[RMDB]
RNA sequence: GGGAACGACUCGAGUAGAGUCGAAAAGUGAACUGCAACCAAUCGGCCAAGCAGGUUAUUUUAAUGUGUUCUUCAAUGCCAGGUUGCAAAGGCUAUGAAAGCACGAUGAUCUAGCUAGUCCUAUCCGUGGAGAAUAAUACUUCGGUAUUAUUCUCCAAAAAGAAACAACAACAACAAC
Reactivity to DMS in 0.01 (KOAc 150mM, MgCl2 10mM, bicine 150mM(pH8.5), 24C), signal-to-noise 5, nucleotides 027 to 126: g010u010g000a080a120c090u000g010c050a090a110c030c020a120a160u000c150g020g010c030c110a110a170g000c050a030g000g010u000u000a030u000u010u010u000a050a100u000g020u000g000u000u010c160u000u000c050a050a210u000g000c010c010a110g000g000u010u010g040c110a080a050a090g000g000c010u000a190u000g000a040a020a050g000c020a020c050g000a070u000g010a070u010c030u000a060g010c020u000a090g010u000c010c060u010a090u010c050c060g020
Reactivity to 2A3 in 0.01 (KOAc 150mM, MgCl2 10mM, bicine 150mM(pH8.5), 24C), signal-to-noise 2, nucleotides 027 to 126: g070u050g040a060a060c030u060g000c010a000a020c020c040a010a190u120c050g020g050c040c000a040a000g030c010a010g020g090u020u020a070u040u140u040u110a150a140u200g000u000g010u000u050c070u050u020c030a010a000u060g010c000c030a110g120g020u150u050g010c010a070a060a000g010g020c030u000a030u220g000a050a030a000g010c020a000c070g010a030u070g000a000u010c010u000a080g000c020u000a010g020u000c010c000u080a110u040c040c020g110
Record summary: An RNA of 177 nucleotides, treated with DMS and 2A3 and read out base by base. For DMS the reverse transcriptase was MarathonRT. The reactions ran in a buffer of 150 mM KOAc, 10 mM MgCl2 and 150 mM bicine (pH 8.5), at 24 C. It was measured as part of the RMDB library OK2TRN.